[RMDB]
RNA sequence: GGGAACGACUCGAGUAGAGUCGAAAACAAGAAAAGCCCCAGCGUAUGCUAAGCGACCCGUACCGCAAACCGACACAGGUGGGUGGGUAGAAUAUACCAAGGCGUAAGAGUGAAACCUGGUUAAGGAAUAUAUCAUGGUAUUCGUACCAUGAUAUAUAAAAGAAACAACAACAACAAC
Reactivity to DMS in 0.01 (KOAc 150mM, MgCl2 10mM, bicine 150mM(pH8.5), 24C), signal-to-noise 9, nucleotides 027 to 126: c080a110a130g010a090a070a130a160g000c040c010c010c050a080g010c080g010u010a030u010g010c050u010a090a170g020c050g010a070c030c020c020g020u020a090c040c030g010c070a040a060a050c040c020g010a130c150a080c140a090g000g010u000g000g010g020u010g010g000g010u000a030g010a090a070u030a070u010a040c050c030a090a100g010g010c040g010u010a070a080g010a100g010u010g010a070a120a100c020c010u010g010g010u010u020a100a090g010g010a140
Reactivity to 2A3 in 0.01 (KOAc 150mM, MgCl2 10mM, bicine 150mM(pH8.5), 24C), signal-to-noise 9, nucleotides 027 to 126: c050a030a070g130a090a140a020a020g050c000c010c000c000a020g000c020g070u110a030u130g020c030u050a070a030g030c010g050a090c010c010c020g050u080a070c010c000g040c060a070a070a030c020c020g110a070c060a030c020a150g040g020u060g020g010g040u110g040g000g000u020a040g030a090a060u210a010u020a070c010c020a040a040g030g000c020g030u090a070a030g060a020g080u080g050a080a030a020c010c010u020g060g000u060u060a070a040g060g030a060
Chemical mapping of a 177-nucleotide RNA with DMS and 2A3. Values cover nucleotides 27 to 126. The RNA was probed in 150 mM KOAc, 10 mM MgCl2 and 150 mM bicine (pH 8.5) at 24 C. For 2A3 the reverse transcriptase was SuperScript II with manganese.